[RMDB]
An RNA of 177 nucleotides, treated with DMS and 2A3 and read out base by base. The reactions ran in a buffer of 150 mM KOAc, 10 mM MgCl2 and 150 mM bicine (pH 8.5), at 24 C. Values cover nucleotides 27 to 126.

RNA sequence: GGGAACGACUCGAGUAGAGUCGAAAAUGGGACGUCAAGGUCAGUUCGUAUGCUGCGGGAAAUGGCCGCCGAGGAGGUAGGGCUUACGCUUGCGUUUGUCUGUUAUAUCUUGGUGGACGAGUAGUCGCAUAAAACGUGACUUCGGUCACGUUUUAUGAAAAGAAACAACAACAACAAC
Reactivity to DMS in 0.01 (KOAc 150mM, MgCl2 10mM, bicine 150mM(pH8.5), 24C), signal-to-noise 3, nucleotides 027 to 126: u010g010g010g000a090c080g020u010c100a080a070g010g010u000c030a080g000u000u010c070g020u010a060u010g010c040u000g010c030g020g000g000a050a050a100u000g010g010c010c030g010c030c020g010a060g010g000a070g010g010u010a070g000g000g010c000u000u000a020c050g020c030u010u000g020c030g020u000u000u000g010u000c010u000g000u010u010a080u010a070u010c020u010u000g010g030u010g000g010a050c040g010a100g010u000a090g020u010c100g010
Reactivity to 2A3 in 0.01 (KOAc 150mM, MgCl2 10mM, bicine 150mM(pH8.5), 24C), signal-to-noise 2, nucleotides 027 to 126: u060g030g010g020a010c030g020u070c050a010a050g090g010u030c030a020g050u060u040c000g030u030a040u110g030c030u030g020c030g000g060g050a000a120a120u120g090g000c030c000g010c000c000g010a010g030g010a020g000g040u080a060g070g010g010c000u010u020a010c000g040c040u060u080g060c020g050u000u030u010g040u010c040u010g180u260u070a130u010a020u100c040u020u020g020g010u050g030g020a040c030g000a040g020u060a030g010u040c040g010

It was measured as part of the RMDB library RFMREP. DMS adducts were read by reverse transcription with MarathonRT.